Source information:
The record gives the reactivity of an RNA of 207 nucleotides to 2A3 and DMS. For 2A3 the reverse transcriptase was SuperScript II with manganese. Source: RMDB library OK3TST, as collected in RNAgym. For DMS, 2,923 sequencing reads were counted. Reactivities are given for positions 27 through 156. The RNA was probed in 150 mM KOAc, 10 mM MgCl2 and 150 mM bicine (pH 8.5) at 24 C. DMS adducts were read by reverse transcription with MarathonRT.
RNA sequence: GGGAACGACUCGAGUAGAGUCGAAAAUCGACAGACCUAAGCGGUUCCAAUCCUUCUUUGAAAUCACCAUCUAGUAUCAACUCGGCGAAACUUCGUGCUUCUCGAUCAUUUUUUCGAUUUCCGAAGUGGUCUAGGAAGUCCUGGAAUCCCGAUGUUACAUUAGGCACUACUUCGGUAGUGCCUAAUGAAAAGAAACAACAACAACAAC
Reactivity to 2A3 in 0.01 (KOAc 150mM, MgCl2 10mM, bicine 150mM(pH8.5), 24C), signal-to-noise 4, nucleotides 027 to 156: u110c030g020a010c020a030g110a050c020c020u050a110a050g040c090g020g040u110u050c040c020a040a070u040c030c030u080u120c020u080u090u130g120a120a100a050u110c020a030c070c000a050u110c060u140a090g080u110a120u200c070a050a020c030u010c010g030g000c220g030a060a020a020c010u060u040c080g040u080g010c010u010u030c020u010c020g020a020u010c020a050u040u060u060u020u110u100c050g050a110u150u090u090c080c020g000a020a010g000u010g000g010u000c000u000a010g070g040a020a010g010u030c000c020u060g000g020a020a030u010c000c000c000g060a060u210g030u070u070a020
Reactivity to DMS in 0.01 (KOAc 150mM, MgCl2 10mM, bicine 150mM(pH8.5), 24C), signal-to-noise 1, nucleotides 027 to 156: u000c020g010a110c030a080g020a100c070c030u020a020a070g000c030g000g000u010u000c020c010a100a130u000c020c080u000u000c020u000u010u000g020a040a090a070u000c010a030c030c080a140u010c080u000a110g010u010a130u000c030a090a030c000u000c010g010g000c020g030a060a030a300c030u000u000c030g050u000g020c020u000u000c020u000c120g000a070u010c010a010u000u000u010u010u000u000c050g010a300u000u000u000c080c050g030a040a070g030u010g010g030u000c000u010a160g020g020a050a060g030u000c060c030u000g010g000a050a300u000c000c000c000g000a060u000g010u000u000a110